[RMDB]
RNA sequence: GGGAACGACUCGAGUAGAGUCGAAAAGUUUAUGCAAAGGCACUUCGCAAUGUGUGCUCAAACAUUGCUUAUUCAAACACGCUUCGCAAUGUGCGACAAAGAAACAUUGUUAUAAGAGCUAAUGUUUACCACGCCUAAAGGUUCGCCUUUAGGCGAAGAAUAUCUUCAGCUUCGGCUGAAGAUAUUCAAAAGAAACAACAACAACAAC
Reactivity to 2A3 in 0.01 (KOAc 150mM, MgCl2 10mM, bicine 150mM(pH8.5), 24C), signal-to-noise 7, nucleotides 027 to 156: g030u090u120u080a130u170g050c040a050a030a030g050g000c000a010c030u060u040c090g000c020a010a010u050g010u010g030u040g040c090u040c070a030a050a000c010a000u000u000g000c010u050u130a180u150u140c080a030a100a070c100a020c130g070c060u050u060c030g000c010a000a010u010g010u000g010c000g040a040c070a030a140a040g130a020a090a000c000a010u000u010g020u100u110a130u040a200a050g010a000g010c030u050a080a020u040g010u020u020u030a070c040c030a030c020g000c000c000u000a010a000a000g040g010u020u080c180g110c050c000u000u000u000a000g000g000c000g000a000a000
Reactivity to DMS in 0.01 (KOAc 150mM, MgCl2 10mM, bicine 150mM(pH8.5), 24C), signal-to-noise 2, nucleotides 027 to 156: g000u000u000u000a110u020g010c030a030a080a210g010g000c010a070c030u000u000c090g010c060a060a040u000g030u000g040u000g000c000u000c060a110a240a030c020a030u000u000g000c000u000u000a120u000u070c060a050a120a100c070a130c070g030c120u000u000c140g000c020a060a030u000g010u000g010c070g020a150c090a020a090a080g010a230a120a030c020a030u010u010g000u000u000a060u010a050a080g000a070g050c030u000a060a090u000g030u010u000u010a160c020c010a190c000g000c010c010u000a000a010a050g000g020u000u000c300g040c010c000u000u000u000a000g010g050c000g000a010a020
The record gives the reactivity of an RNA of 207 nucleotides to 2A3 and DMS. DMS (dimethyl sulfate) methylates the pairing face of unpaired adenines and cytosines. For DMS, 2,737 sequencing reads were counted. The reactions ran in a buffer of 150 mM KOAc, 10 mM MgCl2 and 150 mM bicine (pH 8.5), at 24 C. The 2A3 profile rests on 5,186 reads. Source: RMDB library M2RFPK, as collected in RNAgym. For 2A3 the reverse transcriptase was SuperScript II with manganese.